The record gives the reactivity of an RNA of 177 nucleotides to DMS and 2A3. DMS adducts were read by reverse transcription with MarathonRT.
RNA sequence: GGGAACGACUCGAGUAGAGUCGAAAAAAUCUUAAUUGAGCACCUGGGUGUUCUGGGCACUGUGCUAGACAGGGAAGUUCCUAGCUCAGGCACAGCCGUGGCCUGGAGGCUCCCACCCGUGGAGUCACAUGUGGAAGAUAUUCGUAUCUUCCACAUGAAAAGAAACAACAACAACAAC
Reactivity to DMS in 0.01 (KOAc 150mM, MgCl2 10mM, bicine 150mM(pH8.5), 24C), signal-to-noise 8, nucleotides 027 to 126: a080a050u000c020u000u000a080a110u000u000g010a070g010c040a070c020c050u010g000g000g010u000g020u000u000c030u000g010g010g020c020a190c010u000g000u000g000c040u000a090g010a080c050a200g000g000g000a100a170g010u000u000c010c000u000a120g020c110u010c030a300g010g000c020a020c020a040g010c270c110g000u010g010g030c010c010u010g000g000a080g010g010c070u000c090c090c010a060c060c070c070g010u000g010g000a170g000u000c030a180
Reactivity to 2A3 in 0.01 (KOAc 150mM, MgCl2 10mM, bicine 150mM(pH8.5), 24C), signal-to-noise 6, nucleotides 027 to 126: a010a010u080c070u090u090a170a140u200u080g030a040g060c020a020c040c030u050g090g050g010u050g050u130u020c020u030g030g020g030c030a020c050u020g000u010g010c010u020a050g010a070c020a030g060g030g070a130a200g210u230u160c010c010u020a060g020c050u030c050a030g020g000c010a010c000a030g070c070c080g180u100g100g020c000c000u040g040g020a040g010g040c050u010c010c010c010a050c010c020c020g100u090g020g000a030g030u040c020a020
The 2A3 profile rests on 9,580 reads.